An RNA of 177 nucleotides, treated with 2A3 and DMS and read out base by base. The 2A3 profile rests on 951 reads. The RNA was probed in 150 mM KOAc, 10 mM MgCl2 and 150 mM bicine (pH 8.5) at 24 C. It was measured as part of the RMDB library OK2TST.
[RMDB]
RNA sequence: GGGAACGACUCGAGUAGAGUCGAAAACUGCCGGUCAUCUGGUGGCUCCUGCGCAUGACGCCGCCGCGCCCGCAGGAGGAAACCUUUCCGCCGUUGCGCAUUCUGGCGCAGGUUUUCAGGCGCGAGAAUUUUAAAUCGGGUUCGCCCGAUUUAAAAUAAAAGAAACAACAACAACAAC
Reactivity to 2A3 in 0.01 (KOAc 150mM, MgCl2 10mM, bicine 150mM(pH8.5), 24C), signal-to-noise 1, nucleotides 027 to 126: c000u000g050c040c010g060g080u130c010a210u100c120u100g000g000u020g040g020c000u020c020c000u000g010c020g000c030a170u130g020a110c020g010c010c030g030c040c040g000c010g000c000c000c000g000c010a030g010g060a000g010g030a010a060a060c000c000u070u050u000c020c030g020c000c020g140u100u070g030c020g000c040a060u300u070c030u270g060g020c010g000c040a010g040g000u000u020u090u160c070a050g040g000c020g000c080g010a040g120a050
Reactivity to DMS in 0.01 (KOAc 150mM, MgCl2 10mM, bicine 150mM(pH8.5), 24C), signal-to-noise 3, nucleotides 027 to 126: c070u010g010c040c010g000g040u010c160a100u000c070u010g020g020u000g010g020c020u000c010c020u000g010c020g030c300a090u000g010a060c200g010c030c110g020c150c050g000c010g010c020c040c050g010c010a040g000g000a040g000g010a040a080a080c070c050u000u000u000c070c030g010c030c030g000u010u010g020c030g020c070a150u010u010c150u010g010g020c010g010c020a080g000g010u000u000u000u010c070a110g000g000c010g010c040g010a120g020a100